[RMDB]
Chemical mapping of a 177-nucleotide RNA with DMS and 2A3. For DMS the reverse transcriptase was MarathonRT. The DMS profile rests on 1,982 reads. Values cover nucleotides 27 to 126. The RNA was probed in 150 mM KOAc, 10 mM MgCl2 and 150 mM bicine (pH 8.5) at 24 C.
RNA sequence: GGGAACGACUCGAGUAGAGUCGAAAAGAUAUGGACUCCAUCACAACAGCUCCCAGUCGGAAACGACUGAGGAGACAUGUGUUGGGAGUCCUAAGUCAAAACGUCUCACUGUUCGCAGUGAGACGAAGACCUAGAGGUAGUUCGCUACCUCUAGGUCAAAAGAAACAACAACAACAAC
Reactivity to DMS in 0.01 (KOAc 150mM, MgCl2 10mM, bicine 150mM(pH8.5), 24C), signal-to-noise 2, nucleotides 027 to 126: g020a000u000a060u010g010g000a030c000u000c000c010a020u000c000a010c000a060a140c220a200g000c000u010c000c020c010a010g000u000c010g000g000a020a030a040c000g020a010c000u010g000a120g000g010a010g000a020c160a050u000g010u010g000u000u020g010g010g020a020g000u000c000c000u000a000a040g000u000c020a080a070a080a190c040g010u000c000u000c000a000c000u000g020u000u000c220g020c000a000g010u020g000a010g000a000c000g000a040a040
Reactivity to 2A3 in 0.01 (KOAc 150mM, MgCl2 10mM, bicine 150mM(pH8.5), 24C), signal-to-noise 3, nucleotides 027 to 126: g000a010u030a010u060g000g010a020c000u000c030c010a020u030c000a000c040a260a300c110a270g010c000u000c000c000c000a010g000u000c000g000g020a050a010a020c010g030a000c010u020g050a180g150g010a000g000a000c010a060u100g010u010g060u000u080g210g060g000a020g000u000c000c000u000a000a000g010u010c020a000a000a050a190c010g000u000c000u000c000a000c000u020g050u080u110c300g010c190a000g000u000g000a000g000a000c000g010a010a010